Overview:
This 177-nucleotide RNA was probed chemically with 2A3 and DMS. The RNA was probed in 150 mM KOAc, 10 mM MgCl2 and 150 mM bicine (pH 8.5) at 24 C. For DMS the reverse transcriptase was MarathonRT. 2A3 adducts were read by reverse transcription with SuperScript II with manganese. Values cover nucleotides 27 to 126. The 2A3 profile rests on 4,565 reads.
RNA sequence: GGGAACGACUCGAGUAGAGUCGAAAAGAUAUGGAUCCCUUCUGUGUGGAGGCUUUGGCUCGGAAACGAGCCGCAGCCGUUGAAACACAGAGAGGGAUCCUAAGUCAAACCCACCGUUCGCGGUGGGGAACAGUUACCACUUCGGUGGUAACUGUUCAAAAGAAACAACAACAACAAC
Reactivity to 2A3 in 0.01 (KOAc 150mM, MgCl2 10mM, bicine 150mM(pH8.5), 24C), signal-to-noise 1, nucleotides 027 to 126: g020a020u070a040u250g030g010a030u000c010c010c060u010u010c000u000g000u000g010u020g000g040a010g000g000c000u000u060u080g000g000c000u020c000g040g000a060a110a060c020g000a000g030c000c000g000c020a000g000c010c010g030u090u010g000a020a010a000c000a010c010a000g030a030g020a000g000g000g000a000u010c000c020u000a040a010g030u020c040a020a030a270c030c000c000a000c000c010g020u070u090c300g000c040g100g000u030g000g000g020
Reactivity to DMS in 0.01 (KOAc 150mM, MgCl2 10mM, bicine 150mM(pH8.5), 24C), signal-to-noise 3, nucleotides 027 to 126: g020a060u020a300u000g000g010a000u000c000c000c000u000u000c010u010g010u000g020u010g010g020a070g030g000c010u000u000u000g010g010c010u000c000g000g000a140a090a220c000g020a020g000c000c000g020c210a010g010c000c000g000u010u010g010a200a170a010c010a000c010a010g010a040g020a040g000g020g010a020u000c000c000u010a000a080g020u000c050a100a140a300c020c000c000a000c010c020g010u000u030c300g030c020g020g030u000g000g000g020